[RMDB]
RNA sequence: GGGAACGACUCGAGUAGAGUCGAAAAGAUAUGGAUAAGCUACCCACCUUGCUUUGCCUGAUCGUGAGCGUAGCUCGGAAACGAGCUACGCUCUUGAGGGCAGGAGCAAGAGGCUUAUCCUAAGUCAUCAGUUGUAAAGGUUCGCCUUUACAACUGAAAAAGAAACAACAACAACAAC
Reactivity to DMS in 0.01 (KOAc 150mM, MgCl2 10mM, bicine 150mM(pH8.5), 24C), signal-to-noise 3, nucleotides 027 to 126: g010a120u030a190u010g000g000a020u000a000a010g020c010u000a160c010c020c030a300c040c010u000u010g010c000u010u000u000g010c000c000u000g000a230u000c080g020u000g000a010g010c000g010u000a010g020c000u000c000g000g010a070a050a230c000g010a020g000c000u000a000c000g000c000u000c000u000u000g010a100g010g000g010c000a020g000g010a010g000c000a010a030g010a050g020g000c010u000u000a000u000c000c010u000a010a070g020u040c220a150